[RMDB]
RNA sequence: GGGAACGACUCGAGUAGAGUCGAAAAGAUAUGGAAAUCGUGAAUGGCGUUUGACGUAGUUCGGAAACGAACUACCGAGCCACACGGAUUUCCUAAGUCAAAGGUCAGAAAGUUCGCUUUCUGACCACAGUGCUAGAGCGUUCGCGCUCUAGCACUGAAAAGAAACAACAACAACAAC
Reactivity to 2A3 in 0.01 (KOAc 150mM, MgCl2 10mM, bicine 150mM(pH8.5), 24C), signal-to-noise 1, nucleotides 027 to 126: g030a000u020a040u110g010g000a010a000a000u040c010g000u010g110a300a300u300g030g080c060g040u210u300u040g010a020c030g000u020a010g040u010u000c010g010g000a040a000a000c010g030a080a000c010u000a000c010c000g070a000g040c010c010a040c000a010c120g040g010a000u020u000u000c000c000u010a030a000g020u040c070a160a070a050g000g000u000c000a000g040a020a000a020g030u150u220c240g110c140u000u000u060c010u000g000a000c010c000a000
Reactivity to DMS in 0.01 (KOAc 150mM, MgCl2 10mM, bicine 150mM(pH8.5), 24C), signal-to-noise 2, nucleotides 027 to 126: g010a020u000a170u030g010g010a010a000a000u010c010g010u090g030a300a170u030g040g030c010g010u010u010u100g010a120c300g000u000a000g000u020u020c010g020g000a050a020a140c000g010a050a010c020u000a000c000c000g000a030g010c010c010a140c000a020c000g020g010a030u000u000u000c010c020u010a020a070g000u000c010a040a120a180g000g010u000c000a000g020a020a000a020g000u020u010c230g010c010u020u000u000c000u000g000a010c010c010a060

This 177-nucleotide RNA was probed chemically with 2A3 and DMS. The RNA was probed in 150 mM KOAc, 10 mM MgCl2 and 150 mM bicine (pH 8.5) at 24 C. For 2A3 the reverse transcriptase was SuperScript II with manganese. DMS adducts were read by reverse transcription with MarathonRT.